Conditions: 150 mM KOAc, 10 mM MgCl2 and 150 mM bicine (pH 8.5), 24 C. Structure probing data (2A3 and DMS) for a 177-nucleotide construct.

RNA sequence: GGGAACGACUCGAGUAGAGUCGAAAAAGCGAAUACCACCGGAGCAAGUACCUCAAACCGAAUGCAUUUACCACAGAAAGUGUUGUGCUGCCGGAUACCAGUGGAUUUCUACAGCACUCGGCUCGGCCGUCUCAAGUAGGUUCGCCUACUUGAGACGAAAAGAAACAACAACAACAAC
Reactivity to 2A3 in 0.01 (KOAc 150mM, MgCl2 10mM, bicine 150mM(pH8.5), 24C), signal-to-noise 2, nucleotides 027 to 126: a000g020c010g030a070a010u080a120c020c030a020c010c000g040g030a020g010c060a080a040g060u050a100c030c030u090c070a080a020a020c020c030g050a070a030u080g020c030a020u040u100u090a050c020c020a030c030a040g140a120a190a040g090u020g050u140u040g010u010g000c000u010g000c020c010g000g010a030u080a030c000c010a030g020u030g010g060a060u060u070u020c020u080a100c050a070g030c010a020c020u040c060g010g020c030u010c030g030g000c010
Reactivity to DMS in 0.01 (KOAc 150mM, MgCl2 10mM, bicine 150mM(pH8.5), 24C), signal-to-noise 4, nucleotides 027 to 126: a070g000c040g010a060a070u000a140c080c010a070c070c040g000g010a130g020c030a040a110g010u010a090c060c030u000c070a030a090a100c050c040g010a090a120u000g000c040a040u010u000u010a070c060c030a040c080a090g000a060a080a080g010u010g010u000u010g010u010g010c020u000g000c150c030g010g010a080u000a070c080c030a090g020u000g000g000a160u010u010u000c050u000a070c100a060g010c050a030c040u010c090g010g010c080u000c050g020g000c060
Reactivities are given for positions 27 through 126. It was measured as part of the RMDB library OK2TST. 2A3 adducts were read by reverse transcription with SuperScript II with manganese.